[RMDB]
RNA sequence: GGGAACGACUCGAGUAGAGUCGAAAAGAUAUGGACGUACGGGUACCUUCAACAGCUAAGGUCGGAAACGACCUUAGACAUGAAGUGUACUUACGUCCUAAGUCAAAAGUGACAGUUCGCUGUCACACUAGAAUCUUGACUUCGGUCAAGAUUCUAGAAAAGAAACAACAACAACAAC
Reactivity to 2A3 in 0.01 (KOAc 150mM, MgCl2 10mM, bicine 150mM(pH8.5), 24C), signal-to-noise 2, nucleotides 027 to 126: g040a010u100a040u130g030g000a000c020g010u100a110c240g170g000g000u010a000c000c010u000u000c040a220a180c030a180g030c010u000a000a010g020g000u000c010g060g030a010a110a020c010g000a000c000c020u000u010a000g010a030c010a040u090g000a020a020g050u040g020u190a000c000u000u020a000c000g010u000c000c000u000a040a000g060u030c030a080a000a040a160g010u030g000a000c010a000g000u020u130c300g090c130u000g000u020c010a000c020a000
Reactivity to DMS in 0.01 (KOAc 150mM, MgCl2 10mM, bicine 150mM(pH8.5), 24C), signal-to-noise 2, nucleotides 027 to 126: g020a040u000a300u010g030g010a010c010g010u000a020c300g030g000g030u000a000c010c020u000u010c020a040a140c300a190g020c020u000a010a010g000g000u000c000g000g000a130a080a190c010g010a030c000c000u000u000a000g010a010c130a170u020g000a000a010g000u020g000u000a010c020u000u000a000c010g010u000c010c000u010a020a070g000u000c050a100a060a090a130g010u000g000a000c000a000g010u000u010c300g020c000u000g000u000c000a000c000a110